The record gives the reactivity of an RNA of 177 nucleotides to 2A3 and DMS.

[RMDB]
RNA sequence: GGGAACGACUCGAGUAGAGUCGAAAAUGUGUGUGCGCCUGGGCAACCUGCAGAAAGUGCUACCCUGCUACCGCUCUGCCCACCACGACUACACUGUUAUGGAGGCGUGCGUGAGCAGGGAGGGAAACGUGUCCAGAGUGUUCGCACUCUGGACACGAAAAGAAACAACAACAACAAC
Reactivity to 2A3 in 0.01 (KOAc 150mM, MgCl2 10mM, bicine 150mM(pH8.5), 24C), signal-to-noise 1, nucleotides 027 to 126: u090g030u000g000u000g010u020g060c000g090c040c000u000g030g040g000c040a080a110c020c020u080g000c040a000g190a140a180a010g120u180g010c000u060a210c000c000c000u000g010c000u040a060c000c000g000c000u010c030u120g000c020c000c000a110c000c000a000c020g000a000c000u160a060c120a020c160u180g050u290u070a080u190g000g000a000g000g070c030g000u020g030c090g030u020g040a000g000c000a000g000g000g000a040g000g000g000a000a100a060
Reactivity to DMS in 0.01 (KOAc 150mM, MgCl2 10mM, bicine 150mM(pH8.5), 24C), signal-to-noise 2, nucleotides 027 to 126: u010g030u000g020u010g010u000g000c060g050c040c070u000g020g020g010c080a040a100c030c060u010g020c080a060g000a130a130a050g020u010g030c060u000a150c060c000c000u000g020c030u000a070c030c010g000c000u000c000u030g020c000c000c010a080c000c000a010c020g000a040c020u000a110c100a090c300u000g000u020u020a090u000g000g000a300g000g020c040g020u000g000c140g000u000g000a040g000c000a010g000g010g000a030g000g010g000a060a050a110